Chemical mapping of a 207-nucleotide RNA with 2A3 and DMS. DMS adducts were read by reverse transcription with MarathonRT. It was measured as part of the RMDB library OK3TST.

[RMDB]
RNA sequence: GGGAACGACUCGAGUAGAGUCGAAAACUUAUGGUGCUGUAAAGUGACCAAUUCCUCCACUUUCUCCGCCGAGCUUCCUUUGAUCCCAUCGCACAACGAACACAGAGCUGGCUUCACCACCGAUUUAUAAUCCACACCCAUCACCGCUGCAGGUGUACUAAAUGCUCAGUUUCGACUGAGCAUUUAGAAAAGAAACAACAACAACAAC
Reactivity to 2A3 in 0.01 (KOAc 150mM, MgCl2 10mM, bicine 150mM(pH8.5), 24C), signal-to-noise 3, nucleotides 027 to 156: c030u110u100a120u190g000g040u010g010c040u050g080u210a110a080a060g020u040g160a040c040c000a070a200u080u050c010c020u040c060c000a030c000u060u050u030c030u030c050c020g010c000c040g020a040g050c000u010u030c000c000u070u030u080g040a040u050c030c000c000a030u090c070g030c040a070c030a070a080c070g080a130a010c030a000c000a120g040a010g020c030u020g060g000c000u070u040c030a050c040c000a030c000c010g030a030u050u100u020a160u070a060a060u030c020c020a040c000a010c080c000c010a020u100c010a000c050c020g020c030u150g010c060a030g020g000u010g010u020a010
Reactivity to DMS in 0.01 (KOAc 150mM, MgCl2 10mM, bicine 150mM(pH8.5), 24C), signal-to-noise 2, nucleotides 027 to 156: c030u010u000a110u010g060g000u000g000c030u010g020u010a060a060a120g050u000g010a250c050c050a050a180u000u020c060c000u000c200c000a050c010u000u000u000c010u020c010c020g000c020c040g000a080g020c030u010u000c030c040u000u000u010g010a140u020c020c020c000a160u020c090g010c030a110c080a100a070c010g040a080a090c000a140c030a110g010a080g040c000u000g020g020c020u000u010c030a070c030c030a090c020c030g020a090u000u010u020a090u000a060a070u010c010c040a000c060a110c030c010c000a090u000c040a080c060c020g040c030u000g020c030a130g010g040u000g010u020a160